[RMDB]
RNA sequence: GGGAACGACUCGAGUAGAGUCGAAAACAUCUAAUGAAUAUGAAAAUACAGCUAUUUCCGAUGAAGUUGCAAUUCAUAAUAAAGGUACCGCAGAUACACCAGUCAUAAUUGAAGCAAGAGCAUUGAAAGACAGUACAUCUUAUAUGAUUGCUAAAGGACACUAAUCAGUUUUCGAACUGAUUAGUGUAAAAGAAACAACAACAACAAC
Reactivity to 2A3 in 0.01 (KOAc 150mM, MgCl2 10mM, bicine 150mM(pH8.5), 24C), signal-to-noise 6, nucleotides 027 to 156: c020a040u050c060u200a160a070u130g080a110a050u160a050u150g030a060a080a050a020u130a050c030a020g000c020u060a060u100u110u050c030c060g070a090u120g060a090a020g060u090u050g020c020a040a070u060u060c010a020u050a210a040u080a060a160a010g030g010u010a030c020c050g000c070a010g020a070u050a030c040a020c030c020a000g050u050c030a040u050a180a070u050u100g070a040a010g010c030a040a030g010a000g060c040a030u020u060g080a080a050a040g020a030c020a020g010u050a040c010a070u030c020u070u070a070u020a020u180g050a050u020u070g000c000u030a060a080a000g150g010
Reactivity to DMS in 0.01 (KOAc 150mM, MgCl2 10mM, bicine 150mM(pH8.5), 24C), signal-to-noise 4, nucleotides 027 to 156: c080a080u000c030u000a110a150u010g010a110a170u000a060u000g010a080a060a040a150u000a040c030a070g010c050u010a070u000u000u000c090c040g000a150u000g010a090a110g020u000u010g020c020a060a150u020u000c040a040u010a040a120u000a120a110a110g020g010u000a050c050c040g030c060a150g000a110u000a080c050a040c040c020a040g010u010c060a050u010a040a140u000u000g000a070a100g010c040a040a050g000a110g020c040a060u020u010g000a090a100a080g010a080c020a040g040u000a060c060a120u000c050u000u010a150u010a080u010g010a090u000u000g000c010u010a060a110a120g010g000